[RMDB]
Chemical mapping of a 177-nucleotide RNA with 2A3 and DMS. The DMS profile rests on 1,750 reads. In probing experiments dimethyl sulfate is read out at A N1 and C N3, which are open when not base-paired. For 2A3 the reverse transcriptase was SuperScript II with manganese.
RNA sequence: GGGAACGACUCGAGUAGAGUCGAAAAGGUGUGACUGAACGUGAAGUAGUCAACCAUAUUGAGCAAACUAUCAAACAAUAUGGCGUCAAUGAAAUGAGUUUUGAUACGAUGGUUUUAUUUGGAGAUCAACGUUCAGCAUGUUCGCAUGCUGAACGUUAAAAGAAACAACAACAACAAC
Reactivity to 2A3 in 0.01 (KOAc 150mM, MgCl2 10mM, bicine 150mM(pH8.5), 24C), signal-to-noise 2, nucleotides 027 to 126: g130g000u100g050u000g120a040c000u030g010a040a050c030g090u060g150a070a040g040u110a000g020u000c020a010a000c000c020a060u000a050u100u080g080a010g050c060a000a010a250c040u050a090u140c060a060a030a140c040a070a020u000a000u170g050g000c000g040u040c020a040a150u080g040a090a050a120u200g060a140g030u060u040u050u070g080a100u090a060c060g040a060u070g010g030u050u010u020u020a160u020u020u180g050g030a100g020a020u020c020
Reactivity to DMS in 0.01 (KOAc 150mM, MgCl2 10mM, bicine 150mM(pH8.5), 24C), signal-to-noise 3, nucleotides 027 to 126: g010g000u010g000u000g000a080c020u020g000a070a080c060g000u000g020a080a160g000u000a050g000u000c080a120a090c030c000a020u010a040u010u000g000a140g080c230a030a100a090c230u000a080u000c080a090a100a110c020a010a020u010a040u000g000g000c080g000u000c050a070a040u010g000a050a020a080u020g010a070g010u000u000u000u000g010a100u010a030c110g000a080u000g010g010u000u000u010u010a100u010u020u000g030g010a130g000a150u000c050